[RMDB]
RNA sequence: GGGAACGACUCGAGUAGAGUCGAAAAAACACAGAGUAUAAUCAAGUUCAAGAUGCAUCAAUUUCAGAUCUUUUAAGUAACAUUGGAGGAAAUAUGGGAAUGUUCUUGGGAAUGUCACUUAUCACAACGCAGUGCUAAAUUUCGAUUUAGCACUGCGAAAAGAAACAACAACAACAAC
Reactivity to 2A3 in 0.01 (KOAc 150mM, MgCl2 10mM, bicine 150mM(pH8.5), 24C), signal-to-noise 2, nucleotides 027 to 126: a000a010c160a000c030a000g130a000g030u110a060u080a110a070u100c040a080a010g020u070u050c040a020a010g010a010u060g000c010a020u030c020a050a160u050u090u100c050a000g020a170u000c000u040u030u050u100a050a030g010u050a050a000c010a050u030u050g070g000a030g060g040a020a090a000u200a080u100g030g020g010a040a040u040g020u030u010c010u010u070g050g010g000a100a000u020g030u000c000a000c050u010u060a070u160c100a030c020a160a020
Reactivity to DMS in 0.01 (KOAc 150mM, MgCl2 10mM, bicine 150mM(pH8.5), 24C), signal-to-noise 2, nucleotides 027 to 126: a060a040c080a140c070a060g010a140g010u000a020u010a090a070u020c060a080a080g000u010u000c040a070a070g000a040u010g030c030a050u010c090a030a080u010u000u010c020a050g010a080u010c000u010u000u000u010a020a040g020u000a100a060c090a100u000u000g020g020a060g010g000a020a070a100u000a090u000g000g010g000a070a030u010g020u000u000c010u000u000g000g000g000a040a050u020g010u000c070a030c120u000u000a070u000c100a000c090a140a200
The record gives the reactivity of an RNA of 177 nucleotides to 2A3 and DMS. For 2A3, 1,370 sequencing reads were counted. Source: RMDB library OK2TST, as collected in RNAgym. For DMS, 1,098 sequencing reads were counted. The reactions ran in a buffer of 150 mM KOAc, 10 mM MgCl2 and 150 mM bicine (pH 8.5), at 24 C.